[RMDB]
An RNA of 177 nucleotides, treated with DMS and read out base by base. The RNA was probed in 150 mM KOAc, 10 mM MgCl2 and 150 mM bicine (pH 8.5) at 24 C. Source: RMDB library OK2TST, as collected in RNAgym. Values cover nucleotides 27 to 126.
RNA sequence: GGGAACGACUCGAGUAGAGUCGAAAAGAGUACGCGCGCGUAAAAGACAUAAGAUCGCUCUUCUAUCCAGAGAUGUUGAAGGGAACCCUGGUGAUUCUCGAUGUUAAUAGCGUAAAUAUUUUGGUGAAAUAAACACAACCUUCGGGUUGUGUUUAUUAAAAGAAACAACAACAACAAC
Reactivity to DMS in 0.01 (KOAc 150mM, MgCl2 10mM, bicine 150mM(pH8.5), 24C), signal-to-noise 2, nucleotides 027 to 126: g020a070g010u000a050c090g010c250g020c040g030c040g000u000a080a050a080a230g000a070c060a050u010a150a100g000a080u000c030g030c010u000c010u000u010c040u000a070u010c070c020a090g000a070g000a090u000g010u000u000g020a090a100g020g000g000a070a070c090c040c030u010g020g010u010g000a110u000u000c000u000c030g010a090u000g010u000u000a030a120u000a110g010c020g010u000a030a070a170u020a030u010u000u010u000g000g010u000g000a090